[RMDB]
The data come from the RNA Mapping Database (RMDB), library M2PK50.
This 177-nucleotide RNA was probed chemically with DMS and 2A3.
The RNA was probed in 150 mM KOAc, 10 mM MgCl2 and 150 mM bicine (pH 8.5) at 24 C.

RNA sequence: GGGAACGACUCGAGUAGAGUCGAAAAGUUGAAGUGUUCGCACUUCAACAAACGCUCAACUCAUGGAGCGCAACACGAAUAGCUACAUAUUCGACAUGAGAAAAAGACUGUAGUUCGCUACAGUCAACCAAAUCAUUUGGUUCGCCAAAUGAUUUGGAAAAGAAACAACAACAACAAC
Reactivity to DMS in 0.01 (KOAc 150mM, MgCl2 10mM, bicine 150mM(pH8.5), 24C), signal-to-noise 3, nucleotides 027 to 126: g010u000u000g010a010a030g000u000g040u000u000c200g030c000a000c000u010u000c000a010a000c010a080a120a210c000g020c000u000c010a160a090c000u000c000a020u000g010g000a040g000c010g000c110a070a090c230a060c000g010a010a010u000a010g020c150u030a160c210a140u000a020u010u000c020g010a110c030a000u000g000a010g000a080a100a130a110a120g000a010c000u000g010u000a000g000u000u000c250g020c000u000a000c000a020g000u000c000a040a060
Reactivity to 2A3 in 0.01 (KOAc 150mM, MgCl2 10mM, bicine 150mM(pH8.5), 24C), signal-to-noise 4, nucleotides 027 to 126: g000u010u010g000a000a000g000u000g030u070u140c190g070c040a010c000u000u000c000a000a000c000a000a020a000c020g000c000u010c000a020a120c030u000c010a000u010g000g010a000g000c030g030c130a110a070c070a030c130g010a010a000u020a020g060c100u270a090c100a230u060a050u010u020c000g000a010c000a010u010g000a000g000a070a040a010a010a010g000a000c000u010g000u000a000g010u040u100c260g000c100u000a000c000a000g000u000c000a000a000